RNA sequence: GGGAACGACUCGAGUAGAGUCGAAAAAGUCAGCACCGUUAACGGUGGACCCGACAAUGCCGAUCCGUCGACCAGGAUCCGAGACACGAAACCACCCGACGAACCAAGAUUGUCCACGUCAAACGUACGCGUAUUUUACUUUCGAGUAAAAUACGCGAAAAGAAACAACAACAACAAC
Reactivity to 2A3 in 0.01 (KOAc 150mM, MgCl2 10mM, bicine 150mM(pH8.5), 24C), signal-to-noise 2, nucleotides 027 to 126: a000g030u020c040a040g060c040a040c030c020g080u150u170a280a030c050g030g000u010g060g040a060c000c010c010g000a020c000a110a020u130g090c060c010g030a040u020c010c010g030u060c030g050a040c040c070a070g000g030a010u000c000c050g040a060g050a020c030a000c090g060a070a060a020c010c000a010c030c000c010g000a040c010g010a030a000c010c020a070a000g060a120u050u120g010u000c020c030a020c020g000u000c060a060a090a060c080g130u170a030
Reactivity to DMS in 0.01 (KOAc 150mM, MgCl2 10mM, bicine 150mM(pH8.5), 24C), signal-to-noise 2, nucleotides 027 to 126: a160g000u000c030a170g030c000a030c050c060g000u000u000a060a130c080g000g020u010g020g020a100c080c010c070g000a040c150a030a070u010g010c020c060g000a050u000c000c010g010u010c110g020a150c070c100a130g000g000a040u020c010c060g010a080g010a050c090a090c110g030a100a100a120c080c020a060c010c030c040g030a090c000g000a060a070c020c030a140a120g000a130u010u000g010u000c030c020a030c070g020u000c060a050a060a040c120g010u030a160